[RMDB]
Chemical mapping of a 177-nucleotide RNA with 2A3 and DMS. The DMS profile rests on 9,230 reads. The reactions ran in a buffer of 150 mM KOAc, 10 mM MgCl2 and 150 mM bicine (pH 8.5), at 24 C.

RNA sequence: GGGAACGACUCGAGUAGAGUCGAAAAGUGGUCGAGUGCGAAGCACUGGGGUAGAGAAAUAAAGAGAGAGAGACCUUCCCCGUCAGUCAGUCACUCUCUGUCUGAAUCUCUCUCUCAAAGACCACGAGGAUUUAGUACUGUUCGCAGUACUAAAUCCAAAAGAAACAACAACAACAAC
Reactivity to 2A3 in 0.01 (KOAc 150mM, MgCl2 10mM, bicine 150mM(pH8.5), 24C), signal-to-noise 5, nucleotides 027 to 126: g010u010g010g000u010c020g030a030g030u030g030c160g200a230a080g000c010a010c030u020g000g010g030g040u150a030g020a010g070a060a140a030u220a030a170a010g010a010g000a000g000a000g000a000g010a020c010c000u060u090c020c000c000c010g080u080c020a040g010u010c010a000g010u020c020a040c150u050c010u000c000u030g100u020c010u010g030a090a080u010c010u000c000u000c000u000c010u000c010a010a040a000g000a000c000c000a000c000g000a050
Reactivity to DMS in 0.01 (KOAc 150mM, MgCl2 10mM, bicine 150mM(pH8.5), 24C), signal-to-noise 4, nucleotides 027 to 126: g000u010g000g010u000c000g010a040g020u000g010c000g000a170a130g010c010a010c010u000g020g010g010g020u010a050g010a080g010a050a060a060u030a050a170a060g000a020g010a000g010a040g000a030g020a100c190c140u020u000c000c000c000c110g040u000c090a090g000u000c050a060g010u010c150a170c080u000c030u010c000u000g010u000c010u000g010a160a070u010c050u000c000u000c000u000c000u000c020a030a050a090g010a020c000c000a020c000g010a130